[RMDB]
RNA sequence: GGGAACGACUCGAGUAGAGUCGAAAACAUCUUGAUGGAAAAACUUGGCAAGUGGCCCUCGAUGUACGACGUUGCAACUGCAUGUGCUUGGAUAUCAAUUUUCUAUCCUGAAACAAGGAAUGCUGAAAGAAAUCACUACAUUCGUGUAGUGAUUUCUAAAAGAAACAACAACAACAAC
Reactivity to DMS in 0.01 (KOAc 150mM, MgCl2 10mM, bicine 150mM(pH8.5), 24C), signal-to-noise 4, nucleotides 027 to 126: c070a070u000c060u000u010g000a090u010g030g010a080a080a100a070a100c060u010u000g010g000c070a060a090g020u000g010g000c060c050c020u000c060g000a040u000g010u000a060c120g010a090c100g010u000u000g000c040a050a090c060u010g030c030a040u000g010u000g010c060u000u000g010g010a080u000a060u010c100a060a050u010u010u000u000c060u000a070u000c020c030u000g000a070a080a100c160a100a060g010g000a060a060u010g010c070u000g010a060a140
Reactivity to 2A3 in 0.01 (KOAc 150mM, MgCl2 10mM, bicine 150mM(pH8.5), 24C), signal-to-noise 2, nucleotides 027 to 126: c010a060u050c050u120u100g040a110u120g050g020a010a140a020a000a040c040u080u080g090g000c040a110a000g020u050g050g020c010c010c000u010c020g030a030u050g050u040a050c050g040a000c060g100u040u070g000c040a090a080c030u040g020c030a030u130g030u020g060c030u020u040g020g010a020u040a010u160c120a120a080u100u070u070u040c020u030a150u040c000c000u020g090a090a050a040c040a120a040g060g050a050a030u020g090c020u030g090a010a210